[RMDB]
RNA sequence: GGGAACGACUCGAGUAGAGUCGAAAACAGCUAUUCGUAGCUGAGCGUGGGGUCCAUUGGACUGAAUGUCUACCCACCGAACUACGUCUGAAGCCUCCACGGACGCGAGGACAUUCGACAAUGGACGGAGGCACCCCCCCUGUGCUUUCGAGCACAACUAAGGCAUGAUGUUCGCAUCAUGCCUUAGAAAAGAAACAACAACAACAAC
Reactivity to 2A3 in 0.01 (KOAc 150mM, MgCl2 10mM, bicine 150mM(pH8.5), 24C), signal-to-noise 3, nucleotides 027 to 156: c010a000g000c010u030a020u110u160c220g130u130a030g010c030u010g020a050g070c140g120u150g020g100g050g030u000c010c020a000u010u030g040g120a150c090u170g030a060a020u050g010u000c010u050a170c030c020c100a080c060c040g050a090a050c040u210a050c190g010u000c000u030g060a080a030g000c000c000u000c000c010a030c030g000g000a000c020g030c050g050a060g030g030a040c020a060u030u010c030g000a030c020a030a000u020g010g010a000c000g030g000a010g000g000c000a010c000c000c000c000c010c010c000u010g000u000g000c000u090u090u110c250g130a000g000c000a000c000a000a000
Reactivity to DMS in 0.01 (KOAc 150mM, MgCl2 10mM, bicine 150mM(pH8.5), 24C), signal-to-noise 1, nucleotides 027 to 156: c020a020g020c000u000a010u010u010c280g050u000a030g010c010u000g000a140g010c060g050u000g010g000g050g000u000c000c020a050u000u020g000g000a140c040u030g020a020a060u000g010u000c000u010a270c130c070c120a300c100c040g020a060a130c020u000a010c000g020u010c040u000g000a070a050g030c010c000u000c100c020a300c000g010g000a010c020g000c020g000a210g020g000a040c010a050u000u000c010g010a100c030a070a030u000g000g000a050c010g000g020a070g060g080c020a300c000c000c000c000c000c000c000u000g030u010g010c010u000u050u000c280g000a070g000c010a000c000a010a180